[RMDB]
RNA sequence: GGGAACGACUCGAGUAGAGUCGAAAAGUAGCCACGCCGACAACCUCACCACCCACGUCUUGGACGGCGUGCACCGCCGUCAGCGCGGAGUUACCGGUGGUACUGGUGUCCUCUACCACCAGCACCCCGGCAGCCAGUGAUUCGUCACUGGCUGCCGAAAAGAAACAACAACAACAAC
Reactivity to DMS in 0.01 (KOAc 150mM, MgCl2 10mM, bicine 150mM(pH8.5), 24C), signal-to-noise 1, nucleotides 027 to 126: g060u010a080g030c100c060a100c230g000c000c020g000a080c010a070a060c030c130u000c060a010c030c050a170c060c060c010a100c080g000u070c060u020u000g050g000a030c000g030g070c000g030u000g010c140a100c240c040g030c010c020g070u030c000a010g040c020g000c020g000g000a170g000u000u020a030c040c000g010g000u050g000g000u020a010c000u000g010g060u000g020u000c010c000u020c120u000a020c000c000a020c010c010a000g040c070a070c000c000c000
Reactivity to 2A3 in 0.01 (KOAc 150mM, MgCl2 10mM, bicine 150mM(pH8.5), 24C), signal-to-noise 1, nucleotides 027 to 126: g060u100a010g000c030c000a020c000g010c020c010g030a040c010a060a110c030c020u080c010a050c020c000a040c000c030c010a030c040g050u030c040u040u130g150g000a020c010g040g000c000g000u040g070c050a060c000c040g010c000c010g010u050c030a020g000c030g000c000g040g050a060g020u090u060a040c040c040g040g000u140g040g020u020a070c000u000g000g000u000g020u000c010c020u030c040u030a030c000c010a020c010c010a010g000c030a010c000c000c000

Chemical mapping of a 177-nucleotide RNA with DMS and 2A3. Values cover nucleotides 27 to 126. The DMS profile rests on 1,194 reads. DMS adducts were read by reverse transcription with MarathonRT. The RNA was probed in 150 mM KOAc, 10 mM MgCl2 and 150 mM bicine (pH 8.5) at 24 C. For 2A3 the reverse transcriptase was SuperScript II with manganese.